[RMDB]
RNA sequence: GGGAACGACUCGAGUAGAGUCGAAAAAAAGUGCGGCUGAUUUGGCCGACUCUCGUCUCCAGGUGCCACGCUUCCUGCUCGUUUCGCUGAUGUGCGUGCCGCUGAUGUUUUUUCCGGCGCAGGUGGCUGCUACAGGGAAAUUCGUUUCCCUGUAGCAAAAAGAAACAACAACAACAAC
Reactivity to DMS in 0.01 (KOAc 150mM, MgCl2 10mM, bicine 150mM(pH8.5), 24C), signal-to-noise 3, nucleotides 027 to 126: a040a060a060g010u010g010c010g020g010c010u000g020a180u010u020u010g010g010c020c010g010a040c010u000c040u000c100g020u000c020u000c030c060a110g000g020u000g000c050c040a060c070g010c060u000u000c040c010u000g010c030u000c070g000u000u010u000c050g010c010u010g010a110u000g010u010g010c060g020u000g020c060c020g040c110u000g010a100u000g000u000u000u000u000u000u000c050c020g010g010c060g000c050a100g000g020u010g000g020c080
Reactivity to 2A3 in 0.01 (KOAc 150mM, MgCl2 10mM, bicine 150mM(pH8.5), 24C), signal-to-noise 2, nucleotides 027 to 126: a000a000a030g060u100g020c010g020g000c040u070g160a300u210u240u300g100g020c000c010g110a130c000u000c010u030c050g020u000c000u030c020c020a020g000g070u030g070c000c020a040c010g040c030u100u040c020c010u020g040c010u020c040g020u000u070u080c050g000c030u040g050a130u110g110u030g050c040g030u020g030c030c000g000c050u060g040a070u110g130u070u080u020u010u050u030c010c020g000g010c030g000c030a020g030g060u030g060g010c010